Annotation: This 207-nucleotide RNA was probed chemically with 2A3 and DMS. Reactivities are rounded to 0.1 and cut off at 0 and 3. The RNA was probed in 150 mM KOAc, 10 mM MgCl2 and 150 mM bicine (pH 8.5) at 24 C. The 2A3 profile rests on 2,844 reads. Source: RMDB library OK3TST, as collected in RNAgym.
[RMDB]
RNA sequence: GGGAACGACUCGAGUAGAGUCGAAAAAUAUCUUGAGGAUGAGGCAGUAUAGGGCAUCAAAGGAGAUGCUAGUUUUGCCAUAUGGGGAUGGAGCUUGAUGAGAAGGGCCGUGACUGAAGAAGCAGGUUUGAGAGUCAUCAGACAUCAGGUGUCAGUCCAUUCCAGAACUGUUCGCAGUUCUGGAAUGAAAAGAAACAACAACAACAAC
Reactivity to 2A3 in 0.01 (KOAc 150mM, MgCl2 10mM, bicine 150mM(pH8.5), 24C), signal-to-noise 4, nucleotides 027 to 156: a010u070a050u060c030u030u100g020a030g060g020a020u060g020a040g020g000c020a000g040u080a040u120a150g070g050g000c030a010u020c050a060a130a160g230g030a150g000a010u020g000c000u030a030g000u010u050u070u060g020c010c000a020u060a060u130g000g000g000g030a030u050g010g000a020g020c020u030u070g040a040u030g020a030g030a110a010g010g020g000c040c030g050u030g030a060c020u040g010a100a050g020a060a020g060c060a030g050g010u070u080u130g060a060g000a000g050u020c020a070u020c010a050g030a050c020a050u050c010a000g020g020u020g030u030c010a020g020u000c000
Reactivity to DMS in 0.01 (KOAc 150mM, MgCl2 10mM, bicine 150mM(pH8.5), 24C), signal-to-noise 2, nucleotides 027 to 156: a130u000a050u000c040u000u000g020a060g010g010a100u000g010a140g020g010c020a050g000u010a080u000a110g020g030g010c030a060u000c030a060a070a150g020g000a150g000a050u010g030c020u000a110g010u010u000u010u000g040c020c010a130u010a090u000g030g020g020g020a100u000g020g030a060g030c070u000u010g050a070u000g010a110g020a100a090g000g000g050c020c030g000u010g000a100c030u010g000a060a090g010a060a090g040c050a080g050g000u000u000u010g010a170g010a090g020u000c010a090u000c050a100g000a080c070a090u010c050a110g040g010u000g020u000c020a080g010u000c030